RNA sequence: GGGAACGACUCGAGUAGAGUCGAAAAGGAGAAAGGAAGUUCUGUUGGUCAAGCCAUAUCCGCAUACGGUAUGUGGAUAUGGUAGCCCAAGCUGACGAACACAAAGUCACUUAUUAGCACACACAGGUUGGCCGCCUGCUGUGGGGUGGGCCAUGGAUAAUGACCUAAAUUUCGAUUUAGGUCAUUAAAAAGAAACAACAACAACAAC
Reactivity to DMS in 0.01 (KOAc 150mM, MgCl2 10mM, bicine 150mM(pH8.5), 24C), signal-to-noise 4, nucleotides 027 to 156: g010g020a090g020a080a050a040g010g010a080a110g020u000u000c050u020g030u000u000g020g000u000c070a120a250g010c000c010a030u000a010u000c000c000g010c010a040u000a150c170g050g040u010a020u010g020u000g000g000a010u000a000u000g000g040u000a010g020c090c020c030a010a130g060c080u010g010a080c000g010a080a080c090a150c120a100a070a180g030u010c030a060c080u000u010a140u000u000a090g010c060a060c040a030c050a040c020a040g000g010u000u000g010g000c050c150g000c010c000u000g020c030u010g000u010g030g010g010g020u010g020g020g020c010c040a030u000g000g000a210
Reactivity to 2A3 in 0.01 (KOAc 150mM, MgCl2 10mM, bicine 150mM(pH8.5), 24C), signal-to-noise 7, nucleotides 027 to 156: g060g010a020g040a020a040a010g050g050a060a030g010u070u060c060u060g090u080u040g020g020u090c080a110a050g010c000c000a000u000a000u010c000c000g010c020a010u060a110c130g230g140u290a030u000g000u000g010g000a010u000a000u000g000g000u010a010g000c000c000c010a030a030g030c080u040g000a010c040g040a150a010c090a020c050a140a100a020g030u030c010a010c050u070u080a050u080u110a140g050c040a010c010a000c000a000c010a060g010g040u070u030g060g000c010c020g020c010c010u030g000c080u000g010u040g000g020g020g020u080g010g030g000c020c010a030u060g030g000a030